[RMDB]
RNA sequence: GGGAACGACUCGAGUAGAGUCGAAAACUGUUCUUUUCAGUUUAAUCUCUGAAAGUGUUCCAUAGGAACACAACAUUGAUUAAUCUUAUUUUUGGUCUCCGUGGCAGGGCCCCUGUGCUUGCGCAUGCCAUGUCUAUAGCUUCGGCUAUAGACAUGGAAAAGAAACAACAACAACAAC
Reactivity to DMS in 0.01 (KOAc 150mM, MgCl2 10mM, bicine 150mM(pH8.5), 24C), signal-to-noise 2, nucleotides 027 to 126: c080u000g010u010u000c070u000u000u010u000c120a110g000u010u000u000a020a010u000c000u010c020u000g030a010a160a120g010u000g010u000u000c000c020a240u000a220g030g000a000a020c010a000c000a040a300c000a010u000u000g010a020u000u000a020a020u010c010u000u010a160u020u000u010u000u000g000g010u010c040u000c030c050g020u000g000g020c040a040g010g000g000c040c040c030c070u000g010u000g010c010u000u010g020c080g020c090a050u000g000
Reactivity to 2A3 in 0.01 (KOAc 150mM, MgCl2 10mM, bicine 150mM(pH8.5), 24C), signal-to-noise 2, nucleotides 027 to 126: c010u030g060u120u070c050u100u120u070u040c000a020g010u000u040u020a010a000u000c020u010c000u010g050a130a100a090g040u010g000u000u000c020c020a140u130a260g020g000a010a010c000a000c000a040a040c010a010u010u010g020a020u020u030a020a020u010c020u050u100a230u120u120u040u100u110g090g010u020c020u000c070c050g050u060g000g000c010a020g080g000g020c000c000c000c030u060g050u090g040c050u070u060g050c050g000c020a010u090g050

Conditions: 150 mM KOAc, 10 mM MgCl2 and 150 mM bicine (pH 8.5), 24 C. Structure probing data (DMS and 2A3) for a 177-nucleotide construct. For DMS, 1,660 sequencing reads were counted. For 2A3 the reverse transcriptase was SuperScript II with manganese.